The record gives the reactivity of an RNA of 207 nucleotides to DMS and 2A3. The data come from the RNA Mapping Database (RMDB), library OK3TST. Values cover nucleotides 27 to 156. Conditions: 150 mM KOAc, 10 mM MgCl2 and 150 mM bicine (pH 8.5), 24 C. For 2A3 the reverse transcriptase was SuperScript II with manganese.

RNA sequence: GGGAACGACUCGAGUAGAGUCGAAAAUGAGUCGAUGGGUUCGAGUGCGACCAACGUGGUGACCAACGCCGCGUCUCGCUACUUCGAGCAGAUCAAGCGCAACGAUCCUGCGAUCAAUGAUCAGGAAGCUGCGAACCAAGCUAUCCAGAUGGCACAGAUUAAGGGCAUAUUUCGAUAUGCCCUUAAUAAAAGAAACAACAACAACAAC
Reactivity to DMS in 0.01 (KOAc 150mM, MgCl2 10mM, bicine 150mM(pH8.5), 24C), signal-to-noise 3, nucleotides 027 to 156: u010g010a100g030u000c020g010a060u010g050g020g040u000u000c030g010a040g010u000g000c000g000a070c030c010a020a030c030g070u000g000g040u010g040a220c140c290a170a250c070g020c010c000g000c010g000u000c040u000c040g000c010u010a040c020u000u010c020g020a050g000c040a090g000a080u000c050a100a160g010c010g020c000a050a060c010g000a120u000c020c000u020g000c080g010a300u000c090a100a100u000g020a230u000c010a060g030g020a030a130g000c010u000g020c010g020a100a090c050c020a070a080g000c060u000a070u000c050c040a210g000a110u000g000g000c040a130c110a110g010
Reactivity to 2A3 in 0.01 (KOAc 150mM, MgCl2 10mM, bicine 150mM(pH8.5), 24C), signal-to-noise 3, nucleotides 027 to 156: u110g020a030g030u040c040g030a070u100g030g050g030u010u080c000g000a000g000u020g000c000g000a030c030c040a000a000c000g000u000g010g020u040g060a180c050c050a220a110c040g000c020c000g000c000g000u010c000u000c000g000c040u190a030c020u070u060c010g010a010g010c000a000g000a070u080c060a040a030g050c010g000c050a020a020c030g000a100u040c020c000u000g040c040g090a000u080c020a190a140u200g010a080u070c000a000g020g000a010a000g000c000u020g030c010g020a010a000c030c050a030a010g000c020u030a070u090c000c010a040g040a090u090g020g000c070a030c030a000g000